[RMDB]
RNA sequence: GGGAACGACUCGAGUAGAGUCGAAAAGAUAUGGAGCGUCGUAUGGACGAAGAACUCGGAAACGAGGGAGUCUGAAUACGAGCGCUCCUAAGUCAAACAGCUGUUCAGGUUCGCCUGAACAGCUGAAGAUCUCGAAAAACUUCGGUUUUUCGAGAUCAAAAGAAACAACAACAACAAC
Reactivity to DMS in 0.01 (KOAc 150mM, MgCl2 10mM, bicine 150mM(pH8.5), 24C), signal-to-noise 1, nucleotides 027 to 126: g000a040u000a300u000g000g000a000g020c010g010u000c000g000u010a010u020g000g020a150c070g020a110a090g010a260a260c000u000c010g020g000a050a130a270c000g000a020g000g030g030a190g000u000c010u020g010a200a040u000a000c010g000a080g010c000g020c000u000c000c000u000a000a060g000u000c030a110a120a210c000a000g010c000u010g020u000u020c010a010g000g000u000u000c300g000c030c010u010g010a020a000c000a000g010c000u000g000a040a070